[RMDB]
RNA sequence: GGGAACGACUCGAGUAGAGUCGAAAAUCGUCCUCUCCUCGUCUCGGAUUGGCUCAUUCUCAGGUCGGGCGAGGGUCCUCAGUUCUCUCUAUUCUUUCUUUUUGAAAGAGGAGACUGCUGGACCAAAUGAGUACUUUGUUCGCAAAGUACAAAAGAAACAACAACAACAAC
Reactivity to 2A3 in 0.01 (KOAc 150mM, MgCl2 10mM, bicine 150mM(pH8.5), 24C), signal-to-noise 9, nucleotides 027 to 129: u090c020g040u020c010c010u020c020u010c000c000u010c010g110u030c050u050c090g070g040a060u030u080g050g000c030u050c100a170u240u030c070u020c060a040g020g030u040c000g020g010g000c030g020a050g030g000g000u000c000c000u000c000a070g030u260u040c010u000c000u000c030u090a220u200u020c000u050u010u010c010u050u280u120u130u300g010a010a000a000g010a010g000g010a000g000a000c000u020g020c060u010g000g000a000c000c000a020a040a050u180g030a030
Reactivity to DMS in 0.01 (KOAc 150mM, MgCl2 10mM, bicine 150mM(pH8.5), 24C), signal-to-noise 9, nucleotides 027 to 129: u040c110g010u000c010c050u030c030u020c040c010u020c010g030u020c030u020c050g010g010a120u020u010g000g010c080u040c120a040u060u020c100u010c010a100g000g030u020c030g020g000g070c000g020a060g000g010g020u010c000c010u010c020a030g010u040u030c020u000c010u020c120u010a210u090u020c000u000u020u010c020u020u070u030u060u070g010a010a000a030g010a050g000g000a010g020a000c010u030g010c150u010g030g010a040c010c020a060a060a060u040g010a240